[RMDB]
RNA sequence: GGGAACGACUCGAGUAGAGUCGAAAAACCUUGUAUUCGUACAAGGUAAAAAUCCUAAGUCAUGAGGAACGAGACAUGCUCGUGUCGGAAACGACACAGAGCAACAGCUCGUUCUCCCCACCAUGAUAUGGAAAAAAGGGUACUUUCGAGUACCCAACUACCCCAUGCUGUUCGCAGCAUGGGGUAGAAAAGAAACAACAACAACAAC
Reactivity to 2A3 in 0.01 (KOAc 150mM, MgCl2 10mM, bicine 150mM(pH8.5), 24C), signal-to-noise 1, nucleotides 027 to 156: a010c000c010u020u010g000u010a050u030u140c280g030u100a000c000a000a000g050g000u000a040a000a000a000a000u060c060c010u040a160a020g000u030c000a030u000g010a020g040g000a000a000c030g000a000g020a060c070a220u020g000c000u010c030g000u000g000u010c000g030g030a090a060a000c010g000a000c000a000c070a080g010a000g040c010a000a010c000a010g030c010u010c000g010u050u020c000u000c000c010c030c000a060c020c010a000u000g010a000u050a110u170g090g010a060a070a040a030a100a140g070g000g000u000a000c000u030u120u170c220g070a010g000u010a000c010c000c000a010a000